[RMDB]
Source: RMDB library OK2TST, as collected in RNAgym. The record gives the reactivity of an RNA of 177 nucleotides to DMS and 2A3. DMS adducts were read by reverse transcription with MarathonRT. The reactions ran in a buffer of 150 mM KOAc, 10 mM MgCl2 and 150 mM bicine (pH 8.5), at 24 C. For 2A3 the reverse transcriptase was SuperScript II with manganese.
RNA sequence: GGGAACGACUCGAGUAGAGUCGAAAAACGAACCUUGUCGCGCGUGAUCGUGCCGGCGCUUGCCUUGCCCGGGGUCUUGGAACCGGACUUCAGGUUAGCAGCCUUCUUGAGGAAGUAGGUCACCGGAGUCGUGGUACUAGUUCGCUAGUACCACGACAAAAGAAACAACAACAACAAC
Reactivity to DMS in 0.01 (KOAc 150mM, MgCl2 10mM, bicine 150mM(pH8.5), 24C), signal-to-noise 1, nucleotides 027 to 126: a110c130g000a110a090c040c050u010u000g020u010c050g020c080g020c020g020u000g000a060u020c090g040u020g040c130c040g000g000c080g030c050u010u000g000c020c050u000u000g030c020c020c030g000g000g010g020u010c000u010u010g020g000a110a080c030c030g010g020a030c010u000u000c050a090g030g010u000u000a050g010c020a110g020c030c000u000u000c030u020u000g020a210g000g010a050a030g020u000a060g000g020u000c050a070c020c000g020g010a180
Reactivity to 2A3 in 0.01 (KOAc 150mM, MgCl2 10mM, bicine 150mM(pH8.5), 24C), signal-to-noise 1, nucleotides 027 to 126: a000c030g010a020a050c000c020u030u030g060u040c030g040c020g010c020g170u100g110a160u150c030g060u100g030c060c060g030g040c010g070c000u040u110g010c000c000u020u030g000c020c030c020g000g030g000g000u050c060u090u130g170g040a040a020c040c000g010g050a000c010u080u050c080a000g060g000u020u030a030g010c040a030g000c030c000u030u080c030u040u160g070a120g090g060a000a060g000u050a030g000g000u060c040a030c090c020g000g040a040